[RMDB]
RNA sequence: GGGAACGACUCGAGUAGAGUCGAAAAGAUAUGGACACCAUUGUGGGAGACGCAGUAUCGGAAACGAUACGCGUCUUUGAUCACACUGUGGUGUCCUAAGUCAAACCGGUACGUUCGCGUACCGGAACGAUUUUUAUAGGUUCGCCUAUAAAAAUCGAAAAGAAACAACAACAACAAC
Reactivity to DMS in 0.01 (KOAc 150mM, MgCl2 10mM, bicine 150mM(pH8.5), 24C), signal-to-noise 6, nucleotides 027 to 126: g000a030u000a280u010g000g000a010c000a000c000c000a010u000u000g020u000g000g000g010a060g000a010c000g010c000a140g040u000a000u000c000g010g000a080a050a150c000g020a010u000a000c000g010c010g010u000c000u000u010u010g010a120u020c220a170c010a010c160u000g020u000g000g010u000g010u000c000c000u000a000a050g010u000c020a100a160a200c010c010g010g000u000a000c010g020u010u020c200g030c010g020u000a000c000c000g000g000a020a040
Reactivity to 2A3 in 0.01 (KOAc 150mM, MgCl2 10mM, bicine 150mM(pH8.5), 24C), signal-to-noise 5, nucleotides 027 to 126: g020a010u040a020u100g010g000a000c000a000c010c000a010u020u060g000u010g030g160g110a210g000a020c020g000c110a180g020u020a000u000c000g010g010a050a010a010c000g000a000u020a010c000g000c020g000u010c010u010u020u050g000a010u040c020a000c000a010c080u030g010u000g000g000u000g000u010c000c000u000a010a000g010u010c020a030a040a160c000c000g000g000u000a010c000g020u020u080c300g000c010g160u010a000c000c010g000g000a010a000
Conditions: 150 mM KOAc, 10 mM MgCl2 and 150 mM bicine (pH 8.5), 24 C. Chemical mapping of a 177-nucleotide RNA with DMS and 2A3. For 2A3 the reverse transcriptase was SuperScript II with manganese. The DMS profile rests on 12,856 reads. The data come from the RNA Mapping Database (RMDB), library TTRDES.